[RMDB]
RNA sequence: GGGAACGACUCGAGUAGAGUCGAAAAUGGUCAGUGCAGCGUUUGCUUUCGUCUUGUCCAUGCUCUUCAUCUGAGCUGGCUGGGGAAAGCGGAAUGACUGGUAGUACCUGAACUCCCCUGAUCAAUCAGAACACUGCCAGUUCGCUGGCAGUGUUCUAAAAGAAACAACAACAACAAC
Reactivity to 2A3 in 0.01 (KOAc 150mM, MgCl2 10mM, bicine 150mM(pH8.5), 24C), signal-to-noise 2, nucleotides 027 to 126: u020g130g000u080c170a180g000u150g200c050a000g010c070g020u020u030u030g000c010u000u000u030c090g300u000c060u000u100g120u130c030c000a050u180g000c010u000c000u020u160c180a230u120c120u160g000a000g000c000u000g000g030c000u010g000g000g000g000a020a020a020g000c000g030g030a040a070u010g020a070c030u000g020g030u000a000g000u120a020c000c000u000g000a070a000c020u080c000c000c000c000u030g020a040u140c000a200a010u220c080
Chemical mapping of a 177-nucleotide RNA with 2A3. The 2A3 profile rests on 492 reads. Source: RMDB library RFM100, as collected in RNAgym.